This 207-nucleotide RNA was probed chemically with 2A3. 2A3 adducts were read by reverse transcription with SuperScript II with manganese. Conditions: 150 mM KOAc, 10 mM MgCl2 and 150 mM bicine (pH 8.5), 24 C.
[RMDB]
RNA sequence: GGGAACGACUCGAGUAGAGUCGAAAACAAGCAGCGAUGAGGAUGAUGAUGUCGUUUUGUUGGACACCACUCUUGCUCUGCCUUUUACGGAGACGGAUGACGGAGCUGUGGGGCUCUAUGUCCCCAAGCUUUCAUUGUCGCUGUCUUCACUUGAAAAAUUGGACUUUAGGUUCGCCUAAAGUCCAAUAAAAGAAACAACAACAACAAC
Reactivity to 2A3 in 0.01 (KOAc 150mM, MgCl2 10mM, bicine 150mM(pH8.5), 24C), signal-to-noise 2, nucleotides 027 to 156: c080a030a000g010c020a010g000c040g090a130u130g010a020g130g030a070u080g010a070u030g040a100u020g070u030c060g020u050u040u040u250g130u040u130g100g010a010c020a010c000c000a040c010u010c000u000u070g010c020u040c000u070g000c010c010u110u170u070u100a170c190g010g000a000g020a000c000g070g010a140u080g010a030c000g000g000a000g000c000u010g160u130g180g000g010g010c010u040c070u210a210u220g110u220c020c000c010c000a000a010g000c000u020u050u130c080a130u050u150g000u000c020g000c000u000g000u030c000u030u000c000a010c030u030u090g100a040a040a090a010